Structure probing data (2A3 and DMS) for a 177-nucleotide construct. Values cover nucleotides 27 to 126. The RNA was probed in 150 mM KOAc, 10 mM MgCl2 and 150 mM bicine (pH 8.5) at 24 C.

RNA sequence: GGGAACGACUCGAGUAGAGUCGAAAAUAGCAGUCUUUCGAGACUGCUACAUUAAUAGUCGCUAGAAAACGAUCUAAACUAGCGACUAACAUAACGAUCGAAAAGACGCACCCUUCGGGGUGCGUAAGGUACCGUAAUGAUUCGUCAUUACGGUACCAAAAGAAACAACAACAACAAC
Reactivity to 2A3 in 0.01 (KOAc 150mM, MgCl2 10mM, bicine 150mM(pH8.5), 24C), signal-to-noise 2, nucleotides 027 to 126: u040a000g000c000a000g000u020c010u030u090u160c190g070a010g000a000c010u010g010c020u000a000c000a010u020u080a060a090u050a090g000u000c000g000c010u010a000g020a110a100a030a060c030g030a020u000c010u100a020a070a110c010u000a000g000c020g010a000c010u000a010a000c010a010u190a120a080c050g040a020u040c010g030a010a060a010a060g110a020c000g000c000a000c000c030c000u050u040c230g040g000g000g030u000g000c000g000u010a000a000
Reactivity to DMS in 0.01 (KOAc 150mM, MgCl2 10mM, bicine 150mM(pH8.5), 24C), signal-to-noise 2, nucleotides 027 to 126: u000a000g030c000a000g010u020c000u000u000u020c150g010a050g000a010c010u010g000c030u000a010c060a060u000u030a060a080u030a020g000u020c020g010c000u010a000g020a050a050a120a120c040g000a040u000c060u010a070a200a160c010u000a010g000c000g000a010c000u010a010a080c160a100u020a100a120c220g010a040u000c020g010a190a070a140a080g000a020c000g040c000a020c000c000c020u000u000c210g020g000g030g000u000g000c000g030u020a000a030